[RMDB]
RNA sequence: GGGAACGACUCGAGUAGAGUCGAAAAGAUAUGGAUCCCGAAACAGCGCGAAACGUGGGUUCGGAAACGAACCUCACGGAGCUGUAGGGAUCCUAAGUCAAAACUGAGAGGGUUCGCCCUCUCAGAACAAAAAAGUUACGUUCGCGUAACUUUUUUGAAAAGAAACAACAACAACAAC
Reactivity to DMS in 0.01 (KOAc 150mM, MgCl2 10mM, bicine 150mM(pH8.5), 24C), signal-to-noise 5, nucleotides 027 to 126: g010a010u000a030u010g000g000a010u000c000c000c000g010a130a190a130c010a000g020c000g050c250g010a090a050a060c010g050u000g000g000g000u000u000c000g010g010a010a000a010c000g010a000a000c010c010u020c010a000c000g010g010a020g040c000u000g030u000a180g010g000g010a010u000c000c000u010a000a060g000u000c000a110a080a170a280c000u000g010a020g010a010g010g010g020u000u020c280g010c000c000c000u000c000u000c010a000g000a090a150
Reactivity to 2A3 in 0.01 (KOAc 150mM, MgCl2 10mM, bicine 150mM(pH8.5), 24C), signal-to-noise 3, nucleotides 027 to 126: g010a000u010a010u040g000g010a000u010c050c000c030g050a300a300a030c010a010g020c010g030c100g290a240a040a000c010g000u000g000g000g050u000u000c000g000g000a000a000a000c010g000a000a000c020c000u050c010a000c000g000g020a010g000c000u010g030u150a300g000g000g000a000u000c000c000u000a000a000g000u000c020a000a000a130a200c010u010g000a010g000a000g040g030g000u090u200c290g140c050c000c000u020c000u000c000a000g000a000a010